Record summary
Chemical mapping of a 177-nucleotide RNA with DMS. It was measured as part of the RMDB library TTRINS. Reactivities are given for positions 27 through 126.
[RMDB]
RNA sequence: GGGAACGACUCGAGUAGAGUCGAAAAGAUAUGGAGCAAAAGGGCAUUUUAUGAUUCGAUGGAAUCCGUUCGGAAACGAACGGUAUUUGUUGACGAAUACAUAAAAUGCCCUUUUGCUCCUAAGUCACUCCACAGUAAACUUCGGUUUACUGUGGAGAAAAGAAACAACAACAACAAC
Reactivity to DMS in 0.01 (KOAc 150mM, MgCl2 10mM, bicine 150mM(pH8.5), 24C), signal-to-noise 2, nucleotides 027 to 126: g010a070u000a300u000g010g000a000g000c000a010a000a020a010g000g020g000c000a000u000u020u010u000a010u010g010a150u010u000c000g020a210u010g000g000a020a050u000c000c000g000u000u010c000g010g010a120a110a270c010g000a000a000c000g010g000u000a010u000u000u010g020u020u020g030a200c150g000a020a000u010a140c010a020u000a000a000a000a000u000g000c010c000c000u000u000u000u000g000c000u030c000c000u000a010a050g010u000c030a240